[RMDB]
The record gives the reactivity of an RNA of 177 nucleotides to DMS and 2A3.
Reactivities are given for positions 27 through 126.
The DMS profile rests on 2,787 reads.
The 2A3 profile rests on 5,186 reads.
2A3 adducts were read by reverse transcription with SuperScript II with manganese.
The RNA was probed in 150 mM KOAc, 10 mM MgCl2 and 150 mM bicine (pH 8.5) at 24 C.

RNA sequence: GGGAACGACUCGAGUAGAGUCGAAAACGCCGCCCAUCCCGUACACAUAAUCUUCAGGAAUGGCUUUCAGUACCAUGCGGUCUUUGCCGUCGCGUCCCUUGGUGCUGACGACGACUGCUUCAGACGGCGUCGGCCAGCUAUUCGUAGCUGGCCGACGAAAAGAAACAACAACAACAAC
Reactivity to DMS in 0.01 (KOAc 150mM, MgCl2 10mM, bicine 150mM(pH8.5), 24C), signal-to-noise 2, nucleotides 027 to 126: c090g050c030c050g020c040c010c060a150u000c020c000c020g000u030a030c120a020c170a090u000a080a060u040c050u000u010c050a050g010g000a080a040u000g000g010c060u010u020u000c030a080g000u000a020c000c000a020u000g000c080g010g020u000c020u000u040u060g000c000c020g010u020c030g000c100g000u030c000c060c000u000u000g000g000u020g040c030u000g000a040c130g010a120c100g000a050c050u000g000c060u000u020c070a080g010a040c090g020g000
Reactivity to 2A3 in 0.01 (KOAc 150mM, MgCl2 10mM, bicine 150mM(pH8.5), 24C), signal-to-noise 6, nucleotides 027 to 126: c030g020c000c010g030c010c000c000a040u070c020c020c020g080u140a010c070a000c010a070u190a150a120u130c090u150u120c040a040g050g100a050a100u070g070g000c000u010u110u060c030a000g010u020a030c000c010a020u050g070c100g020g020u030c030u060u070u130g040c020c000g030u040c040g010c040g030u010c010c020c000u020u040g030g000u040g000c050u050g010a010c030g030a010c020g020a020c020u070g010c000u100u070c030a040g010a050c020g020g010